Source: RMDB library OK1LIB, as collected in RNAgym.
The record gives the reactivity of an RNA of 177 nucleotides to DMS and 2A3.
RNA sequence: GGGAACGACUCGAGUAGAGUCGAAAAUCGAGCCGGACUUCAAUCGCUCAUUGAUGGGCGCUUCCCUAAAAGAUAUCGGUUCACACAUAUCUGGUGUCAUAUCGUUCUUAGGGAUUCACGGGUCCGAGCAGUGGGAGCCUUUCGAGGCUCCCACUGCAAAAGAAACAACAACAACAAC
Reactivity to DMS in 0.01 (KOAc 150mM, MgCl2 10mM, bicine 150mM(pH8.5), 24C), signal-to-noise 1, nucleotides 027 to 126: u000c020g050a160g000c060c010g090g010a050c000u000u000c130a140a090u090c070g000c000u000c000a110u000u000g020a060u000g020g000g050c000g000c300u000u000c010c000c000u000a100a030a100a290g000a000u000a000u000c080g000g090u050u000c100a010c000a060c150a180u070a140u000c230u000g000g000u050g000u010c050a020u020a000u000c050g010u000u000c230u080u000a010g000g000g000a000u000u020c000a030c300g000g000g000u000c000c000g020a000
Reactivity to 2A3 in 0.01 (KOAc 150mM, MgCl2 10mM, bicine 150mM(pH8.5), 24C), signal-to-noise 3, nucleotides 027 to 126: u090c010g010a000g070c050c030g000g000a000c030u210u090c280a060a150u070c070g000c020u020c030a030u110u300g160a300u150g000g000g000c040g000c000u000u040c000c000c000u030a050a040a000a000g040a000u060a030u100c140g040g040u140u080c080a040c010a000c000a020u260a110u300c210u250g090g000u000g010u030c000a000u020a000u040c010g150u160u000c050u060u030a000g010g010g000a030u090u100c060a020c150g000g000g000u000c000c000g000a020